The record gives the reactivity of an RNA of 207 nucleotides to 2A3.
RNA sequence: GGGAACGACUCGAGUAGAGUCGAAAACGCGAUGGAUACGUCCAUCGCGAAUACGCCCUAGCCGCGGACGUUAAACUGUGGCACGGUUGUGCCUAGGUGCAACCCUGCUACUAAUGGCGGUACCCCUGCCCAAGCUACCGUCUACGGACGGUAGCAAGACCGUACUAGGGUUCGCCCUAGUACGGUCAAAAGAAACAACAACAACAAC
Reactivity to 2A3 in 0.01 (KOAc 150mM, MgCl2 10mM, bicine 150mM(pH8.5), 24C), signal-to-noise 2, nucleotides 027 to 156: c010g020c000g010a000u000g010g000a000u010a060c230g160u000c000c000a000u000c010g010c000g010a000a000u050a010c010g040c020c000c000u040a030g000c020c000g000c030g040g050a060c050g020u040u080a170a220a080c130u080g000u000g000g020c030a000c000g040g000u020u010g010u030g030c010c020u100a240g010g140u010g020c020a000a010c000c000c000u000g000c000u000a010c010u070a100a140u150g110g000c020g020g010u170a160c000c000c010c010u020g010c000c020c050a060a030g010c000u000a000c000c000g000u000c000u020a040c300g060g000a000c000g000g000u000a000g000c000a000a000
It was measured as part of the RMDB library OK3TST. For 2A3, 1,162 sequencing reads were counted.